[RMDB]
About this RNA: The record gives the reactivity of an RNA of 177 nucleotides to 2A3 and DMS.
RNA sequence: GGGAACGACUCGAGUAGAGUCGAAAAGAAGUCCGACACGCUGUCGCGGGGCGAUUUAGCACCUUUCCCGGGAAAGGUCCCGGUGCGAUUUAGGCACAUUUAUUAGAUCAGUGCCGAUCUAAAGAAAGCAUAUGCGAUACUUCGGUAUCGCAUAUGCAAAAGAAACAACAACAACAAC
Reactivity to 2A3 in 0.01 (KOAc 150mM, MgCl2 10mM, bicine 150mM(pH8.5), 24C), signal-to-noise 1, nucleotides 027 to 126: g060a100a000g040u000c010c000g000a000c020a020c090g100c060u140g000u200c040g020c040g050g000g000g070c010g000a000u060u070u200a060g040c030a050c000c000u000u000u060c010c020c000g060g030g000a100a130a050g070g060u050c030c020c000g040g040u010g020c010g000a000u030u020u200a060g010g100c030a020c000a090u000u210u180a170u070u210a100g060a060u060c100a060g070u010g140c080c000g000a010u000c000u050a060a070a050g060a070a140a000
Reactivity to DMS in 0.01 (KOAc 150mM, MgCl2 10mM, bicine 150mM(pH8.5), 24C), signal-to-noise 2, nucleotides 027 to 126: g000a110a160g000u010c030c000g000a130c080a140c100g020c050u010g000u010c100g020c090g030g000g030g010c050g000a070u000u010u010a060g030c040a060c020c010u000u000u000c020c010c030g000g000g000a080a140a140g010g000u010c000c010c020g050g020u000g000c040g010a140u020u010u000a090g000g010c000a010c050a100u020u000u000a100u010u000a050g000a040u020c100a080g020u010g010c070c000g000a010u000c020u000a060a060a180g010a080a090a100